The record gives the reactivity of an RNA of 170 nucleotides to DMS and 2A3.
The data come from the RNA Mapping Database (RMDB), library 15KLIB.
The RNA was probed in 150 mM KOAc, 10 mM MgCl2 and 150 mM bicine (pH 8.5) at 24 C.
The 2A3 profile rests on 1,496 reads.

RNA sequence: GGGAACGACUCGAGUAGAGUCGAAAAUUUACGCAGCAAUACUUAAUGGUUGCGCUUGGUUUGUAAAACCUAAUCGCACUAGUGUUGUUUCUUUUAAUGAAUGGGCUCUUGCCAACCAAUUCACUGAUGCUCUCCUCCUUCGGGAGGAGAAAAAGAAACAACAACAACAAC
Reactivity to DMS in 0.01 (KOAc 150mM, MgCl2 10mM, bicine 150mM(pH8.5), 24C), signal-to-noise 2, nucleotides 027 to 129: u010u210u000a000c120g090c010a010g000c070a240a000u210a000c080u010u000a040a040u000g000g000u040u040g000c170g010c000u050u000g040g040u000u000u300g000u020a010a170a000a020c000c000u000a050a160u000c000g000c080a000c220u090a200g000u000g000u000u000g090u300u000u000c000u010u010u010u010a000a200u060g040a050a070u000g000g000g010c090u000c000u000u090g000c210c100a160a050c000c000a070a120u000u000c000a130c230u010g010a020u000g000c210
Reactivity to 2A3 in 0.01 (KOAc 150mM, MgCl2 10mM, bicine 150mM(pH8.5), 24C), signal-to-noise 2, nucleotides 027 to 129: u160u140u000a000c040g000c030a000g000c000a000a030u000a170c070u130u120a270a000u300g000g080u080u050g010c000g000c010u050u050g040g110u150u000u040g280u150a120a180a040a050c000c080u160a070a000u010c000g020c000a000c000u140a080g270u040g040u130u000g000u000u000u000c000u000u000u000u000a010a050u000g120a000a000u010g000g000g000c050u120c110u030u090g000c000c000a000a000c000c010a000a160u020u040c030a030c100u080g050a010u080g050c020